[RMDB]
RNA sequence: GGGAACGACUCGAGUAGAGUCGAAAAGGAACGGCUCAUCUCGACAAGAGGCGGCGGUCCUCAGUACUCUUACUCUUUUCUGUAAAGAGGAGACUGCUGGACUCGCCGCCCGAGUUCGAGACUGAGCCAUCUCCGAGAGAAGAUUCCGCAGGGGACGGCAUAAAACGUGGUUCGCCACGUUUUAUGCAAAAGAAACAACAACAACAAC
Reactivity to 2A3 in 0.01 (KOAc 150mM, MgCl2 10mM, bicine 150mM(pH8.5), 24C), signal-to-noise 3, nucleotides 027 to 156: g030g000a030a000c070g020g000c000u020c020a010u000c010u010c000g000a000c010a020a060g080a160g020g000c000g000g020c010g000g000u000c000c000u020c000a020g000u230a300c010u010c030u070u150a200c020u030c020u140u100u110u110c220u270g260u300a030a010a000g000a000g020g000a000g000a000c000u010g070c090u050g000g000a010c020u040c220g000c000c000g000c000c000c000g000a010g000u110u040c010g000a000g000a000c080u010g000a000g000c010c000a000u000c000u000c000c010g020a050g030a000g020a180a010g030a060u120u030c040c030g050c050a080g050g000g000g020a040c030g050
Conditions: 150 mM KOAc, 10 mM MgCl2 and 150 mM bicine (pH 8.5), 24 C. An RNA of 207 nucleotides, treated with 2A3 and read out base by base.